Structure probing data (2A3 and DMS) for a 177-nucleotide construct.
The data come from the RNA Mapping Database (RMDB), library OK1LIB.
For 2A3 the reverse transcriptase was SuperScript II with manganese.
The reactions ran in a buffer of 150 mM KOAc, 10 mM MgCl2 and 150 mM bicine (pH 8.5), at 24 C.
For 2A3, 710 sequencing reads were counted.
For DMS the reverse transcriptase was MarathonRT.
RNA sequence: GGGAACGACUCGAGUAGAGUCGAAAAUGGUGUUAAGUGGAAUAAGUGGAAAAAUAUACAUAUAUGUACAGGGGGCUACAUAUAUGUAUAUGCCCCCUCGACUUAGUAUAAGUAGGUAUAAGGUGGAAUUAUCCACGUCAUUCGUGACGUGGAUAAUAAAAGAAACAACAACAACAAC
Reactivity to 2A3 in 0.01 (KOAc 150mM, MgCl2 10mM, bicine 150mM(pH8.5), 24C), signal-to-noise 1, nucleotides 027 to 126: u150g030g000u070g010u050u050a040a030g040u010g080g020a030a060u110a180a010g060u100g040g030a030a050a030a110a000u040a000u010a010c000a000u000a000u000a000u030g010u000a040c130a090g000g060g000g020g020c060u010a000c030a010u050a000u000a030u070g000u020a020u000a000u000g030c030c000c000c000c000u000c000g010a010c000u020u050a010g060u030a060u120a300a020g030u040a000g020g110u070a090u010a190a030g000g040u060g020g030a030
Reactivity to DMS in 0.01 (KOAc 150mM, MgCl2 10mM, bicine 150mM(pH8.5), 24C), signal-to-noise 3, nucleotides 027 to 126: u000g000g020u010g000u010u020a010a130g010u020g020g010a110a050u010a060a050g010u030g000g020a060a090a090a110a060u030a020u000a000c000a020u010a080u000a000u010g000u010a040c090a090g010g020g000g000g020c160u000a010c040a010u000a030u010a010u010g010u010a010u000a020u030g010c100c010c000c020c020u000c030g020a030c040u010u020a030g010u020a060u010a030a120g030u000a040g000g020u010a030u020a050a090g040g020u010g000g000a090